[RMDB]
RNA sequence: GGGAACGACUCGAGUAGAGUCGAAAAGAUAUGGAUUGGCAUCGAUCACGAAUCCGUGGGUCGGAAACGACCCGGACACGGACUAUGGGAGCCAAUCCUAAGUCAAAGUGCUUGUUCGCAAGCACAAGUAUCUACAGUACUUCGGUACUGUAGAUACAAAAGAAACAACAACAACAAC
Reactivity to DMS in 0.01 (KOAc 150mM, MgCl2 10mM, bicine 150mM(pH8.5), 24C), signal-to-noise 6, nucleotides 027 to 126: g010a050u000a300u020g000g000a010u000u000g000g000c000a170u000c090g010a130u010c090a080c110g010a110a120u000c000c000g020u000g010g010g010u000c000g010g020a080a060a150c010g000a010c020c000c020g010g010a120c190a110c020g010g010a020c110u000a080u000g010g010g000a060g010c010c000a010a010u000c000c000u000a010a070g000u000c030a100a090a140g010u000g000c010u000u000g000u000u000c230g010c010a000a000g010c010a000c010a040a080
Reactivity to 2A3 in 0.01 (KOAc 150mM, MgCl2 10mM, bicine 150mM(pH8.5), 24C), signal-to-noise 6, nucleotides 027 to 126: g020a000u040a010u090g010g000a000u010u020g040g000c120a300u100c100g260a170u220c100a050c290g180a180a200u000c000c010g010u090g000g010g020u000c000g000g000a020a040a030c010g010a010c000c020c000g000g030a020c030a010c020g000g020a010c080u240a230u280g070g000g010a010g010c000c000a010a000u000c000c000u000a020a000g020u000c040a110a070a080g000u010g000c000u030u010g030u090u140c230g000c170a000a000g000c000a000c000a000a010